This 177-nucleotide RNA was probed chemically with DMS and 2A3.
The DMS profile rests on 3,391 reads.
In probing experiments dimethyl sulfate is read out at A N1 and C N3, which are open when not base-paired.
It was measured as part of the RMDB library OK2TST.
RNA sequence: GGGAACGACUCGAGUAGAGUCGAAAAUAUGUGACGGACGACGUGUUUGAUAUCCUGGCGGAGGAGCAGGGUGACCACGGCAUCAAGCUGCCGGGGCUGGUGCUGCCGGCGUACAUGAAGGGCCUCCAUCUCACCGAUAUUUCGAUAUCGGUGAGAUAAAAGAAACAACAACAACAAC
Reactivity to DMS in 0.01 (KOAc 150mM, MgCl2 10mM, bicine 150mM(pH8.5), 24C), signal-to-noise 3, nucleotides 027 to 126: u010a070u010g010u020g000a110c070g030g010a080c070g020a070c080g030u000g020u000u010u010g020a140u000a060u030c040c030u000g020g040c090g030g010a070g020g010a110g010c030a050g000g010g000u000g010a080c050c030a080c060g010g020c030a040u000c050a040a110g010c140u000g020c020c000g010g000g010g010c030u010g020g020u010g020c000u000g020c050c020g010g010c050g000u020a030c090a070u020g010a090a090g000g000g010c020c000u000c050c050
Reactivity to 2A3 in 0.01 (KOAc 150mM, MgCl2 10mM, bicine 150mM(pH8.5), 24C), signal-to-noise 2, nucleotides 027 to 126: u250a070u130g100u040g030a040c030g040g020a010c030g030a020c050g020u040g040u080u060u090g110a110u100a030u090c020c000u010g050g030c050g010g070a080g020g000a060g020c020a040g020g000g030u040g030a030c010c040a010c030g010g000c000a030u030c060a040a040g040c040u070g000c030c010g000g000g000g020c010u070g070g100u200g030c010u060g060c000c000g010g000c030g000u030a040c030a060u130g050a020a030g020g020g010c010c000u010c010c020